Structure probing data (2A3 and DMS) for a 177-nucleotide construct. For DMS the reverse transcriptase was MarathonRT. For 2A3 the reverse transcriptase was SuperScript II with manganese. The RNA was probed in 150 mM KOAc, 10 mM MgCl2 and 150 mM bicine (pH 8.5) at 24 C. Values cover nucleotides 27 to 126.

[RMDB]
RNA sequence: GGGAACGACUCGAGUAGAGUCGAAAACAUUGGUGACAGUGCUUGGUGUGCAGGCUGCUUCCAUGCUGGGCGGCAGUGUGGUGAUAGAAAGCGUCUUUGCCGUGCCGGGCCUCGGACGCUUGGCGCAUGAUCAGGAAAAUUUCGAUUUUCCUGAUCAAAAAGAAACAACAACAACAAC
Reactivity to 2A3 in 0.01 (KOAc 150mM, MgCl2 10mM, bicine 150mM(pH8.5), 24C), signal-to-noise 5, nucleotides 027 to 126: c020a030u060u110g050g020u050g060a050c040a060g020u020g120c030u080u080g030g000u060g040u060g060c040a030g030g030c020u030g010c000u130u000c030c010a050u080g010c030u060g010g060g060c050g050g010c030a020g010u020g020u040g060g020u050g020a050u060a100g140a050a090a010g010c020g010u000c000u050u070u060g010c030c030g010u010g120c020c010g030g050g000c020c020u060c060g040g040a020c020g000c020u020u020g010g010c010g000c030a070
Reactivity to DMS in 0.01 (KOAc 150mM, MgCl2 10mM, bicine 150mM(pH8.5), 24C), signal-to-noise 8, nucleotides 027 to 126: c070a100u010u000g000g010u000g010a090c070a050g020u000g010c060u000u000g010g020u000g010u000g010c040a070g010g020c050u000g010c050u000u010c040c040a060u010g000c060u000g000g010g010c080g000g010c030a040g010u000g020u000g000g020u010g010a120u010a080g000a080a060a080g010c020g010u000c010u000u000u000g010c060c050g020u000g010c050c060g000g010g010c060c090u000c160g000g010a070c110g000c010u000u000g010g010c040g010c090a140